[RMDB]
RNA sequence: GGGAACGACUCGAGUAGAGUCGAAAAGUUCCGGAAAGCUUUCAGCUUUAAGCCAGUUAUUAAAACCCCUUUUGAUUUGUUAAAACAUCUUGCGGUCUGGCAACUGCAAAAGUUCAACAAGAAAUCAAAUAAUACUAUCCUUCGGGAUAGUAUUAUUAAAAGAAACAACAACAACAAC
Reactivity to 2A3 in 0.01 (KOAc 150mM, MgCl2 10mM, bicine 150mM(pH8.5), 24C), signal-to-noise 7, nucleotides 027 to 126: g020u030u020c000c000g040g110a080a050a000g020c020u100u150u160c060a020g010c020u100u090u090a080a000g020c010c010a030g020u090u050a110u110u120a140a100a060a070c010c000c000c000u030u050u050u050g060a070u040u050u040g070u060u120a090a150a020a030c020a060u030c030u020u020g010c030g020g030u010c020u020g050g010c050a030a010c010u000g000c000a020a040a020a060g020u070u110c030a040a040c010a060a060g080a110a110a020u100c050a050
Reactivity to DMS in 0.01 (KOAc 150mM, MgCl2 10mM, bicine 150mM(pH8.5), 24C), signal-to-noise 6, nucleotides 027 to 126: g010u000u000c000c000g000g020a060a060a040g000c020u000u020u020c150a080g010c010u010u000u010a090a130g000c030c040a060g000u010u010a080u020u020a080a090a150a150c040c010c020c060u000u000u010u010g000a050u000u000u000g010u010u000a090a130a060a060c050a080u020c090u000u000g000c020g000g000u000c050u010g020g020c130a160a080c020u000g000c030a010a020a070a100g000u000u010c270a040a050c070a070a080g010a090a040a060u010c070a040